The record gives the reactivity of an RNA of 177 nucleotides to DMS and 2A3. The reactions ran in a buffer of 150 mM KOAc, 10 mM MgCl2 and 150 mM bicine (pH 8.5), at 24 C. It was measured as part of the RMDB library TTRDES.
[RMDB]
RNA sequence: GGGAACGACUCGAGUAGAGUCGAAAAGAUAUGGACUCGGCAGCUUUUGACGCGAUCCUGUUCGGAAACGAACAGAACAUCGCGAUAAGCUGCGAGUCCUAAGUCAAAAUCACUGUUCGCAGUGAAAGUAACGAGCAGAGUUCGCUCUGCUCGUUACAAAAGAAACAACAACAACAAC
Reactivity to DMS in 0.01 (KOAc 150mM, MgCl2 10mM, bicine 150mM(pH8.5), 24C), signal-to-noise 2, nucleotides 027 to 126: g040a030u010a300u000g020g000a020c010u010c020g010g030c000a020g020c000u000u010u000u000g020a260c040g030c040g000a030u010c110c000u000g000u020u020c010g010g040a090a080a150c000g000a020a010c000a010g020a050a060c250a110u060c000g000c000g010a060u010a030a040g000c000u000g050c020g000a010g020u010c000c000u000a000a110g010u020c030a150a080a110a240u000c000a010c010u000g010u000u020c270g020c000a040g000u010g000a060a050a190
Reactivity to 2A3 in 0.01 (KOAc 150mM, MgCl2 10mM, bicine 150mM(pH8.5), 24C), signal-to-noise 2, nucleotides 027 to 126: g030a000u030a040u100g010g000a000c020u010c060g300g110c050a000g000c050u210u150u230u300g230a220c200g010c000g000a000u000c020c030u030g000u000u000c010g010g040a010a020a050c020g000a010a000c010a030g040a030a070c150a030u000c010g000c020g040a060u050a170a000g000c000u010g010c000g000a020g000u000c000c010u000a010a000g010u030c010a000a000a030a230u030c010a010c010u000g030u180u130c300g000c080a000g000u030g030a110a020a020